[RMDB]
Conditions: 150 mM KOAc, 10 mM MgCl2 and 150 mM bicine (pH 8.5), 24 C. An RNA of 177 nucleotides, treated with 2A3 and DMS and read out base by base. The 2A3 profile rests on 582 reads. For 2A3 the reverse transcriptase was SuperScript II with manganese.
RNA sequence: GGGAACGACUCGAGUAGAGUCGAAAAGCACAUUUUUGAUGUGUGAAUUAUGAGAAAUUUUAUGCACGAAUCGUAUAUCAUACGACAGUCCAUCAAAGUUUCUGACCUAUCAGGUUCCGACGGUUGGCCUCGGCCUAUGAUUCGUCAUAGGCCGAGGAAAAGAAACAACAACAACAAC
Reactivity to 2A3 in 0.01 (KOAc 150mM, MgCl2 10mM, bicine 150mM(pH8.5), 24C), signal-to-noise 2, nucleotides 027 to 126: g070c000a000c000a000u130u120u030u070u260g070a010u020g040u000g020u070g040a120a060u150u110a190u300g170a050g070a020a040a000u070u050u000u020a020u000g030c030a000c020g010a090a010u060c030g000u030a010u000a020u100c090a050u010a000c000g020a020c010a000g020u000c020c030a000u020c100a000a000a010g040u000u070u040c010u000g020a030c000c000u050a070u150c050a010g090g000u060u060c010c060g030a000c110g180g000u070u000g080g000
Reactivity to DMS in 0.01 (KOAc 150mM, MgCl2 10mM, bicine 150mM(pH8.5), 24C), signal-to-noise 2, nucleotides 027 to 126: g000c030a060c000a010u010u000u000u000u020g000a000u000g010u000g000u000g000a200a100u000u000a070u080g040a070g040a040a030a000u000u000u000u000a040u000g010c300a010c020g020a130a300u000c000g100u000a010u010a190u010c220a040u010a000c000g000a030c150a200g000u000c080c000a000u000c100a000a010a020g000u000u000u000c020u000g040a190c040c010u000a110u010c030a150g000g000u010u000c000c080g000a070c100g000g000u010u010g000g010